[RMDB]
RNA sequence: GGGAACGACUCGAGUAGAGUCGAAAAGGGUGAUGUCUCCUAACCUUUAUCAAUUGGGGCACUCGGUCGUGCUGUGGGUAGAAAUUUUAUUUCGUGCCUACCUUAGACGCUUGUCGUCGGGAGUAUGUGGGACUGAUGAACUUCGGUUCAUCAGUAAUCAUAUUAGUCCGUUCGCGGACUAAUAUGAAAAAGAAACAACAACAACAAC
Reactivity to DMS in 0.01 (KOAc 150mM, MgCl2 10mM, bicine 150mM(pH8.5), 24C), signal-to-noise 3, nucleotides 027 to 156: g010g020g040u000g000a090u010g000u010c030u020c010c020u000a130a060c040c020u010u000u000a170u030c120a090a140u010u000g020g020g000g010c050a080c020u000c050g020g010u010c090g000u000g010c070u000g000u000g010g030g030u000a300g010a030a040a060u000u000u000u010a090u020u040u000c000g020u010g030c020c010u000a030c020c090u000u020a130g010a070c030g000c060u000u000g030u000c020g040u000c020g010g000g010a130g020u000a040u000g000u010g020g000g020a090c000u000g000a010u000g000a020a010c000u000u000c280g030g000u000u000c000a010u000c000a020g020u000a040a240
Reactivity to 2A3 in 0.01 (KOAc 150mM, MgCl2 10mM, bicine 150mM(pH8.5), 24C), signal-to-noise 4, nucleotides 027 to 156: g030g000g010u060g030a100u090g070u040c020u010c030c020u040a050a040c020c000u070u160u100a250u190c130a150a120u110u090g000g010g030g000c000a030c030u020c050g060g020u020c020g020u040g030c040u060g020u020g020g000g000u010a010g070a010a040a030u150u290u160u160a160u020u140u100c040g040u090g030c000c000u020a020c000c000u040u080a010g010a020c010g010c060u190u260g070u290c020g000u010c010g000g030g010a060g030u090a090u130g060u100g020g010g020a000c000u000g010a000u000g000a000a000c020u030u040c160g060g000u000u010c000a000u010c000a010g000u000a000a030
Structure probing data (DMS and 2A3) for a 207-nucleotide construct. Values are in units of 0.01, from 0 to 300, in steps of 10. 2A3 adducts were read by reverse transcription with SuperScript II with manganese. The reactions ran in a buffer of 150 mM KOAc, 10 mM MgCl2 and 150 mM bicine (pH 8.5), at 24 C. It was measured as part of the RMDB library M2RFPK. Reactivities are given for positions 27 through 156. DMS adducts were read by reverse transcription with MarathonRT.